[RMDB]
RNA sequence: GGGAACGACUCGAGUAGAGUCGAAAAAAAGAUAUGGAGCGUUGGGAGCGUCUGCUAUCUAAGACAGGCUAUCGGAAACGAUAGCUCGAGAUAGACCAGACGCUUUGAUCAACGCUCCUAAGUCAAACUUAGAUCGUGAGUUCGCUCACGAUCUAAGAAAAGAAACAACAACAACAAC
Reactivity to DMS in 0.01 (KOAc 150mM, MgCl2 10mM, bicine 150mM(pH8.5), 24C), signal-to-noise 2, nucleotides 027 to 126: a050a090a110g030a030u000a300u000g000g010a000g030c000g000u010u010g000g000g000a010g020c000g020u010c000u010g020c020u030a010u000c000u010a150a100g000a260c300a070g000g000c000u000a000u000c000g000g000a140a110a170c010g010a010u000a000g010c000u000c030g000a020g010a010u000a020g000a070c300c040a000g010a010c010g000c010u010u010u000g010a090u040c010a010a040c000g000c000u000c000c030u020a000a070g030u000c040a050a090a150

This 177-nucleotide RNA was probed chemically with DMS. The DMS profile rests on 1,133 reads. The reactions ran in a buffer of 150 mM KOAc, 10 mM MgCl2 and 150 mM bicine (pH 8.5), at 24 C.